[RMDB]
RNA sequence: GGGAACGACUCGAGUAGAGUCGAAAAGCUAACCCAGCCGGAGGGGACGCGGCGGCGGCCGGCGACGAGGAGCGGAAAGUGGGGCUGGCGCCCGGCGACGUGGAGCAAGUCACCUUGGCGCUCGGGGAUAUCUUAGGUAUUUCGAUACCUAAGAUAUAAAAGAAACAACAACAACAAC
Reactivity to 2A3 in 0.01 (KOAc 150mM, MgCl2 10mM, bicine 150mM(pH8.5), 24C), signal-to-noise 7, nucleotides 027 to 126: g010c010u040a070a090c010c000c010a010g020c010c010g050g010a030g000g030g000g010a010c030g020c030g060g030c040g040g000c000g040g050c020c000g010g030c020g000a030c040g040a070g090g030a030g010c050g030g090a150a070a020g070u120g020g030g010g000c040u060g030g000c010g010c010c020c000g010g000c020g010a040c010g040u150g050g020a070g030c040a070a020g020u010c010a040c040c010u020u070g060g000c020g000c010u020c020g000g000g000g010
Reactivity to DMS in 0.01 (KOAc 150mM, MgCl2 10mM, bicine 150mM(pH8.5), 24C), signal-to-noise 9, nucleotides 027 to 126: g010c110u010a110a170c030c020c020a240g010c020c030g010g010a140g010g010g000g010a100c070g010c080g010g010c100g000g010c060g010g010c010c020g010g010c030g010a090c130g000a100g010g010a080g020c060g000g000a060a050a070g010u010g010g000g010g010c060u000g000g010c020g000c020c010c240g000g000c140g000a060c020g010u000g010g000a080g010c050a060a090g000u000c020a040c020c010u000u000g010g010c020g000c020u000c050g010g000g000g000